[RMDB]
RNA sequence: GGGAACGACUCGAGUAGAGUCGAAAAGAGUCCUAUUUCGAUAGGACUCAACUAAAAUCAGCGGUAAAUAAUUAGCUGGCGUUACCGCUGAACGCCACCAUACUAGCCUCGUCUUCGGACGAGGCAAGACCAUUAUAAAGUUCGCUUUAUAAUGGUCAAAAGAAACAACAACAACAAC
Reactivity to DMS in 0.01 (KOAc 150mM, MgCl2 10mM, bicine 150mM(pH8.5), 24C), signal-to-noise 5, nucleotides 027 to 126: g000a010g010u000c000c000u000a010u000u000u010c160g020a030u000a010g010g000a010c000u000c000a020a110c100u010a060a050a100a100u000c010a000g000c000g020g010u020a030a050a070u010a070a090u000u000a120g000c160u000g000g020c050g010u000u000a070c010c000g010c000u000g010a020a020c050g000c010c020a110c220c180a100u010a090c220u000a110g000c000c000u000c000g010u000c000u000u010c210g000g000a010c000g000a000g000g000c000a000a010
Reactivity to 2A3 in 0.01 (KOAc 150mM, MgCl2 10mM, bicine 150mM(pH8.5), 24C), signal-to-noise 9, nucleotides 027 to 126: g000a000g000u010c000c000u000a010u020u070u050c160g080a010u000a000g000g040a000c000u000c000a000a000c000u050a020a010a020a120u030c000a000g020c000g080g080u130a070a100a120u160a080a170u220u190a080g140c120u070g020g000c010g000u000u010a080c000c000g000c000u000g000a000a000c010g040c010c000a030c030c020a070u110a290c060u090a080g000c000c000u000c000g020u000c010u020u060c210g030g000a000c000g000a000g000g000c000a000a000
The data come from the RNA Mapping Database (RMDB), library M2PK50. Chemical mapping of a 177-nucleotide RNA with DMS and 2A3. The RNA was probed in 150 mM KOAc, 10 mM MgCl2 and 150 mM bicine (pH 8.5) at 24 C.